[RMDB]
RNA sequence: GGGAACGACUCGAGUAGAGUCGAAAAUGGGCGGGUGCAAGACCUGUCAGAAUGGUUUCGUGGCUGACAUUGCUGAAGGUAAGGCACGCAAGACCAGGUACGUGGACCAUGGUUGGCCGACCACCGAGGAUAUACUGGGUUUCGACCCAGUAUAUCCAAAAGAAACAACAACAACAAC
Reactivity to 2A3 in 0.01 (KOAc 150mM, MgCl2 10mM, bicine 150mM(pH8.5), 24C), signal-to-noise 3, nucleotides 027 to 126: u080g020g030g030c040g060g050g010u010g020c010a000a060g050a090c020c010u040g190u070c010a000g030a030a050u080g080g050u060u070u160c060g040u060g110g000c080u090g000a020c010a030u000u130g080c030u000g020a030a040g000g030u060a020a010g100g000c050a000c070g050c080a100a030g000a010c010c000a000g060g050u050a070c150g110u100g120g060a020c020c050a170u020g030g030u050u070g040g000c020c020g030a050c010c000a020c010c020g040a090
Reactivity to DMS in 0.01 (KOAc 150mM, MgCl2 10mM, bicine 150mM(pH8.5), 24C), signal-to-noise 4, nucleotides 027 to 126: u020g010g010g010c030g020g010g000u010g020c120a040a060g000a050c000c020u000g000u010c010a060g010a090a030u010g010g010u000u010u000c060g020u000g000g020c050u000g000a060c050a050u000u010g030c020u010g000a300a050g010g000u000a060a060g000g010c020a040c040g000c160a100a120g010a050c030c000a060g000g000u000a050c150g010u000g010g010a030c000c000a070u010g010g000u010u010g020g000c000c010g020a080c030c020a170c070c020g000a130